[RMDB]
RNA sequence: GGGAACGACUCGAGUAGAGUCGAAAAGAGAGACACACAGGCCUCGCCUCUCUCCAGAGCCGUAACAUCUGGAAGACGAAGAAGGGAGGAACAGAGCGUCGCGUCUCUCCAAAGCAUCGAGCGACGCGAGGGCCGUCCAGUUCGCUGGACGGCCCUCAAAAGAAACAACAACAACAAC
Reactivity to DMS in 0.01 (KOAc 150mM, MgCl2 10mM, bicine 150mM(pH8.5), 24C), signal-to-noise 1, nucleotides 027 to 126: g070a000g000a000g010a000c080a110c150a280c260a210g000g020c000c000u000c000g000c120c000u040c040u000c030u000c000c000a000g050a230g000c090c150g020u000a050a170c130a050u000c020u010g000g000a020a250g030a040c130g000a150a070g030a270a070g000g030g030a020g000g000a240a080c190a060g030a160g000c000g000u000c000g000c060g000u020c000u000c020u000c000c120a080a120a000g000c130a200u030c200g000a140g000c050g000a000c000g000c060
Reactivity to 2A3 in 0.01 (KOAc 150mM, MgCl2 10mM, bicine 150mM(pH8.5), 24C), signal-to-noise 2, nucleotides 027 to 126: g000a000g030a000g040a000c020a000c010a020c040a080g020g180c000c000u020c000g150c050c000u000c010u030c000u000c010c000a040g000a010g030c020c220g180u300a170a050c050a230u000c000u030g000g030a100a070g050a150c150g110a070a100g010a040a060g010g050g000a000g000g030a030a000c000a040g050a000g030c060g050u030c000g010c000g020u000c000u000c020u000c010c000a200a230a000g020c050a010u120c020g020a040g000c000g070a070c000g020c010
Structure probing data (DMS and 2A3) for a 177-nucleotide construct. The RNA was probed in 150 mM KOAc, 10 mM MgCl2 and 150 mM bicine (pH 8.5) at 24 C. DMS adducts were read by reverse transcription with MarathonRT. Reactivities are given for positions 27 through 126.